[RMDB]
Chemical mapping of a 177-nucleotide RNA with DMS and 2A3. The RNA was probed in 150 mM KOAc, 10 mM MgCl2 and 150 mM bicine (pH 8.5) at 24 C. Reactivities are given for positions 27 through 126.
RNA sequence: GGGAACGACUCGAGUAGAGUCGAAAAGAAAAGCAAUUGAGCGCGAUUUUUGACGAUCUGAUCAACAUGGUGCCAAUGGGGCAGACGCUGUUUGGUUCGCUCAAUCCGGUGCGCACCGGUGGGCCGAAAUAAAAUCUCGUUUCGACGAGAUUUUAUUAAAAGAAACAACAACAACAAC
Reactivity to DMS in 0.01 (KOAc 150mM, MgCl2 10mM, bicine 150mM(pH8.5), 24C), signal-to-noise 3, nucleotides 027 to 126: g010a060a110a090a180g010c090a120a070u000u000g000a040g000c030g020c110g010a050u010u010u000u000u010g010a070c060g000a110u000c040u010g010a070u000c050a050a040c150a050u000g010g000u000g000c050c050a090a100u010g010g010g000g020c070a030g010a060c060g000c050u020g000u000u000u000g010g000u000u000c060g010c030u000c020a030a060u010c040c020g000g000u000g040c300g020c200a270c010c020g000g000u010g000g000g020c060c120g010a020
Reactivity to 2A3 in 0.01 (KOAc 150mM, MgCl2 10mM, bicine 150mM(pH8.5), 24C), signal-to-noise 1, nucleotides 027 to 126: g000a020a090a000a000g000c030a040a080u100u090g040a050g010c040g000c030g000a060u040u000u010u050u260g070a060c040g040a060u080c040u030g060a120u080c010a000a030c020a080u080g000g000u100g140c040c010a030a120u080g020g040g040g040c020a010g040a020c040g020c060u040g090u090u020u080g040g000u090u070c070g010c000u000c020a020a040u040c060c010g000g000u050g130c210g050c030a050c030c000g020g000u050g000g080g000c000c040g060a040